[RMDB]
Chemical mapping of a 177-nucleotide RNA with DMS and 2A3. For 2A3 the reverse transcriptase was SuperScript II with manganese.
RNA sequence: GGGAACGACUCGAGUAGAGUCGAAAAGGUGAUGAGCUACUGGAACCCGGUGCUGCAGUACGGCGUCGACAAUUUCGCGCGUGACCUGGCCGCCGCCGGUGGCGCGGGCAUCAUCACGCCGAACCUAGCCAUUUAGUGCAUUCGUGCACUAAAUGGCAAAAGAAACAACAACAACAAC
Reactivity to DMS in 0.01 (KOAc 150mM, MgCl2 10mM, bicine 150mM(pH8.5), 24C), signal-to-noise 2, nucleotides 027 to 126: g020g020u000g000a080u000g000a070g020c030u000a080c050u010g030g020a100a080c120c070c060g050g000u010g010c030u000g030c060a130g010u000a180c100g000g000c030g030u000c070g000a040c300a100a120u000u000u000c020g020c190g030c000g000u000g010a060c170c050u000g020g000c010c050g000c130c110g030c010c010g020g020u000g010g020c020g020c050g000g010g010c000a020u010c140a120u000c000a010c000g030c010c020g000a040a060c110c070u000a110
Reactivity to 2A3 in 0.01 (KOAc 150mM, MgCl2 10mM, bicine 150mM(pH8.5), 24C), signal-to-noise 2, nucleotides 027 to 126: g070g010u040g020a090u010g010a010g010c050u150a060c080u150g040g060a040a050c000c010c020g060g030u030g020c020u000g000c010a030g040u120a060c050g040g010c010g020u100c040g070a040c060a130a170u120u090u000c060g000c020g000c020g070u040g030a060c020c070u060g100g060c050c000g070c050c080g020c050c020g100g070u070g010g000c030g000c020g020g030g040c030a090u020c010a010u000c010a020c020g050c000c000g010a050a050c020c040u040a010
Source information: For 2A3, 2,071 sequencing reads were counted.